RNA sequence: GGGAACGACUCGAGUAGAGUCGAAAAGCUGCGUGAAACCUCGCUGUUUUCUUGGCUAACUUUCAGCGAGGUGAGGCAAGGCGGCAAAAAAAAGUUGGGAGCAGCAACGGCAAGCAAAAAAAAAUUUACAAGUUGCGAUGGUUCGCCAUCGCAACAAGAAACUAGUAUACUUCGGUAUACUAGUUUCAAAAGAAACAACAACAACAAC
Reactivity to 2A3 in 0.01 (KOAc 150mM, MgCl2 10mM, bicine 150mM(pH8.5), 24C), signal-to-noise 2, nucleotides 027 to 156: g030c000u020g000c010g030u090g060a100a030a000c000c000u000c000g000c010u020g060u000u040u020u000c100u150u190g110g000c020u060a060a000c030u070u050u050c000a020g000c000g000a000g000g000u010g000a000g020g000c040a030a000g030g000c040g000g000c020a270a000a000a000a000a000a000a000g070u090u070g020g000g010a030g000c030a010g020c020a060a060c030g040g000c030a000a020g040c020a020a040a030a010a000a000a000a000a050u140u170u120a150c090a170a030g000u000u010g000c010g000a000u000g000g040u090u110c190g020c050c000a000u000c000g020c000a000a000c000a000a000